[RMDB]
RNA sequence: GGGAACGACUCGAGUAGAGUCGAAAAGAUAUGGACAGCGCGUGCAGCAUCGAUCUCGGAAACGAGGGAGCUGCACGAACUACGCUGUCCUAAGUCGAAAAGAGCCGUAACUUCGGUUACGGCUCAACGAUCUAACUCGGUUCGCCGAGUUAGAUCGAAAAGAAACAACAACAACAAC
Reactivity to DMS in 0.01 (KOAc 150mM, MgCl2 10mM, bicine 150mM(pH8.5), 24C), signal-to-noise 2, nucleotides 027 to 126: g020a000u000a300u000g000g030a010c010a000g010c000g040c020g000u000g020c020a010g010c000a280u010c280g000a060u010c010u000c010g010g000a110a060a150c010g000a060g010g010g000a040g030c010u000g020c000a000c000g000a060a020c170u010a300c000g010c020u000g020u010c010c000u000a010a070g000u000c000g000a040a050a100a080g000a020g000c040c000g000u000a000a000c000u000u010c180g030g000u000u000a010c000g000g000c010u000c010a010a040